[RMDB]
RNA sequence: GGGAACGACUCGAGUAGAGUCGAAAAGGAACGGCCUGUCGUAGAGGGUGAGAGUCCCGUAGACGAAAACAUGGUGACUGUCGUGACGGACACCCGAGUAGCAGCGGGCCCGUGAAAUCUGCUGUGACGACGCGAAUGUAUUCGUACAUUCGCGUCGAAAAGAAACAACAACAACAAC
Reactivity to 2A3 in 0.01 (KOAc 150mM, MgCl2 10mM, bicine 150mM(pH8.5), 24C), signal-to-noise 2, nucleotides 027 to 126: g140g020a050a000c030g070g010c000c040u070g030u150c000g010u040a040g010a120g100g000g030u000g000a130g020a000g170u120c040c000c000g000u000a060g030a010c010g010a060a070a050a000c070a050u300g120g010u090g100a070c040u030g020u060c010g000u030g130a000c000g000g010a000c030a000c030c000c000g000a030g020u180a020g020c050a000g000c000g000g000g010c070c050c000g030u030g000a060a090a040u030c040u050g010c010u000g000u080g010a090
Reactivity to DMS in 0.01 (KOAc 150mM, MgCl2 10mM, bicine 150mM(pH8.5), 24C), signal-to-noise 2, nucleotides 027 to 126: g020g050a130a020c050g010g000c030c000u000g000u000c180g060u020a050g000a240g000g000g000u000g010a110g020a120g050u000c010c000c000g000u080a080g000a010c080g000a050a020a030a110c080a060u000g020g030u050g000a090c050u020g030u000c000g020u010g000a030c090g000g000a180c030a110c000c000c010g000a160g000u020a050g000c060a120g000c080g000g020g060c060c050c030g020u020g010a040a040a110u010c030u010g000c050u000g020u040g000a150